[RMDB]
Structure probing data (2A3) for a 207-nucleotide construct. The reactions ran in a buffer of 150 mM KOAc, 10 mM MgCl2 and 150 mM bicine (pH 8.5), at 24 C. 2A3 adducts were read by reverse transcription with SuperScript II with manganese. The 2A3 profile rests on 896 reads. The data come from the RNA Mapping Database (RMDB), library OK3TST.
RNA sequence: GGGAACGACUCGAGUAGAGUCGAAAAACUCUCUGGCCACAGUUUGGGUGGCUGUAGCCCCAUGUAAGUCAAAGACAGAUCCAGCCGCACCUGGGAAGCAAGGCAGAGGGAGGCUGAAAGGAGUGCACCUGUGCUGAGGGGAGGGGCGGUUGAGGGACCUACUGAUAUGGUUCGCCAUAUCAGUAGGAAAAGAAACAACAACAACAAC
Reactivity to 2A3 in 0.01 (KOAc 150mM, MgCl2 10mM, bicine 150mM(pH8.5), 24C), signal-to-noise 2, nucleotides 027 to 156: a000c020u030c000u010c030u020g010g020c010c000a070c050a150g080u100u220u180g120g030g000u030g030g000c000u010g000u000a000g000c000c000c000c030a040u140g060u110a100a050g000u030c080a100a120a020g070a040c000a020g110a070u090c030c030a000g000c000c030g040c050a120c030c000u020g000g040g100a060a050g040c010a030a030g000g030c020a000g030a020g040g020g050a110g080g000c030u040g090a140a070a040g120g050a050g050u080g010c000a050c060c010u060g090u010g080c000u030g020a020g010g020g000g030a050g040g000g000g030c060g000g040u100u130g020a130g020g030g000a010